[RMDB]
RNA sequence: GGGAACGACUCGAGUAGAGUCGAAAAAGCCCAACCGCCGUAUCUAAUACGAUGAGUGGUUCUAAAAACUAACGAAAGCAAACACCUCCUCGUGAGGGUGCUUUCGUUAGUCGUAUUUAGGAAUAGGGCACCGAUCAGAGUUCGCUCUGAUCGGUGCAAAAGAAACAACAACAACAAC
Reactivity to 2A3 in 0.01 (KOAc 150mM, MgCl2 10mM, bicine 150mM(pH8.5), 24C), signal-to-noise 1, nucleotides 027 to 126: a000g050c000c000c000a000a000c000c000g050c040c000g000u000a090u000c100u070a210a190u090a070c010g020a040u030g080a000g090u020g000g000u010u000c000u000a050a110a000a000a000c000u000a000a000c010g000a010a000a000g000c020a170a140a100c060a070c010c000u000c000c000u290c100g170u300g160a000g000g040g040u000g000c000u000u000u000c000g000u010u000a000g000u000c000g060u110a150u000u070u020a020g000g070a060a170u030a050g070g040